Chemical mapping of a 177-nucleotide RNA with 2A3 and DMS. Conditions: 150 mM KOAc, 10 mM MgCl2 and 150 mM bicine (pH 8.5), 24 C. DMS adducts were read by reverse transcription with MarathonRT. Values cover nucleotides 27 to 126.
RNA sequence: GGGAACGACUCGAGUAGAGUCGAAAAGCAAUAACUCCUAUGUGGUCACUGACGAGUCGAAUAUUCGGAAUCACGUCAAUGGAAUGUCUGGCGCUCCUGUUUGGGGAGGUCAAUGGUUCUGGGGUGAAAUCACUACAUCCUUCGGGAUGUAGUGAUUAAAAGAAACAACAACAACAAC
Reactivity to 2A3 in 0.01 (KOAc 150mM, MgCl2 10mM, bicine 150mM(pH8.5), 24C), signal-to-noise 2, nucleotides 027 to 126: g030c000a030a110u100a160a080c020u030c000c000u080a110u140g120u120g060g020u060c030a010c090u030g030a050c010g020a020g000u040c040g060a110a040u200a220u300u120c010g000g090a040a080u130c050a030c150g040u000c030a020a030u080g050g020a100a030u080g050u180c030u020g030g000c120g190c110u060c020c000u150g200u280u160u210g060g000g000g000a040g000g040u030c020a010a090u100g080g000u030u140c060u050g000g000g000g000u060g020a040
Reactivity to DMS in 0.01 (KOAc 150mM, MgCl2 10mM, bicine 150mM(pH8.5), 24C), signal-to-noise 3, nucleotides 027 to 126: g020c110a120a100u000a130a090c110u000c010c000u010a120u000g020u010g010g010u010c060a050c080u020g010a050c050g010a070g010u000c050g030a060a160u000a100u000u010c040g010g000a060a070u010c070a050c040g000u000c050a060a090u000g010g000a050a030u010g010u000c060u010g000g010c020g020c020u010c020c020u000g010u000u000u010g010g000g010g010a030g020g030u000c060a020a050u010g020g000u000u000c050u000g030g000g010g020u000g000a070

The data come from the RNA Mapping Database (RMDB), library OK2TRN.